[RMDB]
RNA sequence: GGGAACGACUCGAGUAGAGUCGAAAACUCCUAUAGUCGUUCGGACCGCCUUCUAUGCUCGCGUCUUUCGAGGGGUACGUCGCCACUGGCCGCUGAAAAGUGGUGUGGCACUGCUCCGGCGAGGACGGCUUAUUAUAAAGUUCGCUUUAUAAUAAGCAAAAGAAACAACAACAACAAC
Reactivity to DMS in 0.01 (KOAc 150mM, MgCl2 10mM, bicine 150mM(pH8.5), 24C), signal-to-noise 9, nucleotides 027 to 126: c110u000c000c020u000a120u010a030g010u000c020g010u000u000c010g020g000a170c050c030g000c060c050u000u000c060u010a090u010g010c050u000c060g020c050g010u000c010u000u000u000c020g020a300g000g000g010g010u000a010c190g020u000c160g030c000c000a010c000u010g020g030c010c000g010c000u000g000a070a050a130a010g040u000g000g020u000g030u000g010g000c010a010c000u000g000c010u000c000c000g010g010c030g010a050g000g000a010c020g010
Reactivity to 2A3 in 0.01 (KOAc 150mM, MgCl2 10mM, bicine 150mM(pH8.5), 24C), signal-to-noise 7, nucleotides 027 to 126: c030u030c010c000u090a080u110a120g040u020c010g020u020u030c020g040g100a080c020c010g030c020c010u100u040c050u090a130u170g060c040u040c060g060c010g020u010c000u070u290u080c010g010a030g020g000g000g000u010a020c150g020u020c150g000c010c000a010c020u040g200g000c010c010g000c020u020g030a050a030a030a010g010u010g000g020u060g000u000g020g000c000a000c000u000g000c000u000c000c010g010g100c010g000a000g000g010a000c000g020